[RMDB]
RNA sequence: GGGAACGACUCGAGUAGAGUCGAAAAACAUAGGUGGCCUCCUUACGAGUAGGCCACCUAUGAAACACUCUCUAUCAGAAUGAAUUCUUGCUGUAAUAACAGAUAGAGUAGGUUGUUACAGACUAAAAUACGUGUGCAUUCUUCGGAAUGCACACAAGUACAAAGAAUGGUUCGCCAUUCUUUGUACAAAAGAAACAACAACAACAAC
Reactivity to 2A3 in 0.01 (KOAc 150mM, MgCl2 10mM, bicine 150mM(pH8.5), 24C), signal-to-noise 2, nucleotides 027 to 156: a000c000a000u000a000g020g000u000g000g010c010c020u070c050c000u070u050a060c150g080a020g010u020a000g000g000c000c000a000c010c000u010a000u000g000a020a000a000c020a000c000u000c000u000c010u020a050u110c030a040g060a280a110u180g050a130a190u230u090c010u150u160g130c010u000g000u020a000a020u020a000a000c010a000g020a050u050a010g030a050g070u080a080g000g060u000u000g010u000u000a000c000a060g050a060c110u220a010a000a040a040u210a080c120g020u010g000u000g000c000a000u000u000c000u000u000c010g050g030a020a020u000g000c000a020c000a000c000a000a000
Reactivity to DMS in 0.01 (KOAc 150mM, MgCl2 10mM, bicine 150mM(pH8.5), 24C), signal-to-noise 1, nucleotides 027 to 156: a210c030a030u000a000g000g030u000g000g000c010c000u000c060c000u000u020a150c230g000a130g070u010a050g030g020c020c000a000c000c000u000a020u020g000a110a120a090c030a110c080u010c040u000c000u000a030u010c040a130g010a050a300u000g020a200a150u020u000c040u000u000g030c040u020g010u010a040a020u000a050a060c030a110g020a140u000a120g000a080g010u010a040g020g000u000u000g050u000u000a130c040a010g000a290c140u000a050a060a040a030u000a110c100g020u000g020u010g010c000a000u000u000c030u000u040c250g040g010a040a010u010g020c040a000c020a000c000a000a060

An RNA of 207 nucleotides, treated with 2A3 and DMS and read out base by base. The reactions ran in a buffer of 150 mM KOAc, 10 mM MgCl2 and 150 mM bicine (pH 8.5), at 24 C. Values cover nucleotides 27 to 156. Values are in units of 0.01, from 0 to 300, in steps of 10. DMS (dimethyl sulfate) methylates the pairing face of unpaired adenines and cytosines. The 2A3 profile rests on 889 reads.